An RNA of 177 nucleotides, treated with DMS and 2A3 and read out base by base. For DMS the reverse transcriptase was MarathonRT. The RNA was probed in 150 mM KOAc, 10 mM MgCl2 and 150 mM bicine (pH 8.5) at 24 C.
RNA sequence: GGGAACGACUCGAGUAGAGUCGAAAAGAUAUGGAGCAGCUACCCACCCAGAUAACGCGAAGAACUCGGAAACGAGGGAGCGUUAAUUGGAGGCUGCUCCUAAGUCAAACGGAACUUCGGUUCCGAACUGACUCAUAUCCUUCGGGAUAUGAGUCAGAAAAGAAACAACAACAACAAC
Reactivity to DMS in 0.01 (KOAc 150mM, MgCl2 10mM, bicine 150mM(pH8.5), 24C), signal-to-noise 2, nucleotides 027 to 126: g020a130u000a160u000g000g000a040g010c000a010g000c010u020a170c000c050c000a300c030c010c020a010g010a120u000a000a000c010g000c000g000a130a150g000a070a080c010u000c000g000g000a070a060a240c000g000a030g000g000g010a100g000c000g000u000u000a010a080u000u000g000g000a130g010g020c010u000g010c000u000c000c010u000a010a030g000u000c200a070a110a140c010g000g000a010a010c000u000u020c100g010g000u000u000c010c000g000a010a040
Reactivity to 2A3 in 0.01 (KOAc 150mM, MgCl2 10mM, bicine 150mM(pH8.5), 24C), signal-to-noise 2, nucleotides 027 to 126: g120a050u250a170u300g000g030a020g020c000a000g000c010u160a300c000c000c030a020c000c010c000a000g030a100u030a000a010c000g070c030g210a300a100g040a130a020c000u000c020g050g030a000a050a040c000g000a000g010g040g010a010g000c010g000u010u000a020a010u050u000g000g000a010g020g000c020u000g020c000u030c000c000u020a000a000g050u030c030a030a080a020c040g010g000a010a000c010u080u060c240g180g000u000u000c010c010g030a020a010